[RMDB]
RNA sequence: GGGAACGACUCGAGUAGAGUCGAAAAUCUAGUGCAUUAGAACUUUGUGACUUGCUGCCGCAGGCACCUGAACCUGACUACAGCCAUCUGGCCUUGCCCAGUCCCGAGGUCAGUGAGGCAUCCUCUGACUACGGUAGCCGUGAACUUAGCUCAGACCUAUAUAUCAUAACUUCGGUUAUGAUAUAUAAAAAGAAACAACAACAACAAC
Reactivity to DMS in 0.01 (KOAc 150mM, MgCl2 10mM, bicine 150mM(pH8.5), 24C), signal-to-noise 4, nucleotides 027 to 156: u010c030u010a090g030u010g020c030a140u000u000a130g010a040a070c030u010u000u000g020u010g010a190c090u000u000g010c020u000g020c020c130g020c040a050g010g020c020a030c080c020u000g010a080a090c050c050u010g010a100c040u010a090c060a130g010c040c040a150u000c020u000g010g000c010c000u010u000g030c030c020c020a220g020u020c010c030c010g040a070g030g020u020c040a020g020u010g010a070g020g000c030a100u000c020c030u000c020u000g020a080c020u000a050c040g000g030u000a050g040c000c040g000u000g010a090a040c050u000u000a050g010c030u010c020a080g000a130c070c060
Reactivity to 2A3 in 0.01 (KOAc 150mM, MgCl2 10mM, bicine 150mM(pH8.5), 24C), signal-to-noise 6, nucleotides 027 to 156: u080c050u050a040g040u030g100c040a100u080u090a100g030a160a090c050u080u100u100g070u060g060a080c010u030u070g000c020u020g010c020c020g000c040a030g000g030c040a060c050c060u060g050a070a050c020c010u030g050a070c030u100a100c140a030g000c020c000a060u050c020u010g000g000c020c000u020u040g020c050c010c020a050g080u100c020c030c020g000a010g010g010u000c010a010g000u020g090a180g040g000c000a050u050c000c040u030c030u050g060a080c020u040a020c050g020g000u020a030g010c010c020g020u040g030a030a030c010u040u040a030g010c010u030c060a020g040a080c070c020

Description
Structure probing data (DMS and 2A3) for a 207-nucleotide construct. The DMS profile rests on 10,389 reads. In probing experiments dimethyl sulfate is read out at A N1 and C N3, which are open when not base-paired. The reactions ran in a buffer of 150 mM KOAc, 10 mM MgCl2 and 150 mM bicine (pH 8.5), at 24 C. Reactivities are given for positions 27 through 156.